[RMDB]
RNA sequence: GGGAACGACUCGAGUAGAGUCGAAAAAAAAUUCGGAUUCGCCAUCAUACGUCCAACCGUGCAUUUGAUAUGCAUAUAUAUGCAUCGCGAGCCACGGUUGGCUGUAUGAUGGCGAUACCGAUUAAAACAUUUCAUUAUAGUUCGCUAUAAUGAAAUGAAAAGAAACAACAACAACAAC
Reactivity to 2A3 in 0.01 (KOAc 150mM, MgCl2 10mM, bicine 150mM(pH8.5), 24C), signal-to-noise 1, nucleotides 027 to 126: a000a000a000a000u040u020c030g020g010a030u030u020c010g010c000c000a000u000c000a000u000a000c010g040u020c020c000a010a000c000c010g010u000g000c030a120u030u020u040g010a020u020a000u020g010c060a010u090a000u010a010u030a000u090g030c000a000u010c050g000c010g050a010g040c060c020a000c000g000g000u000u000g000g000c000u010g010u000a010u000g000a010u000g000g010c010g000a000u010a000c000c000g000a010u010u010a000a010a000a010
Reactivity to DMS in 0.01 (KOAc 150mM, MgCl2 10mM, bicine 150mM(pH8.5), 24C), signal-to-noise 6, nucleotides 027 to 126: a050a050a040a050u010u000c010g010g010a300u000u010c000g010c010c000a010u000c000a010u000a010c000g010u000c000c000a000a010c000c000g000u000g010c160a090u010u000u000g000a060u000a020u000g000c010a000u000a160u000a120u020a010u000g000c000a000u000c060g010c050g000a040g010c300c000a010c000g000g000u000u000g000g010c000u000g000u000a000u000g000a010u000g000g010c000g000a000u000a030c000c000g000a020u000u000a070a060a080a140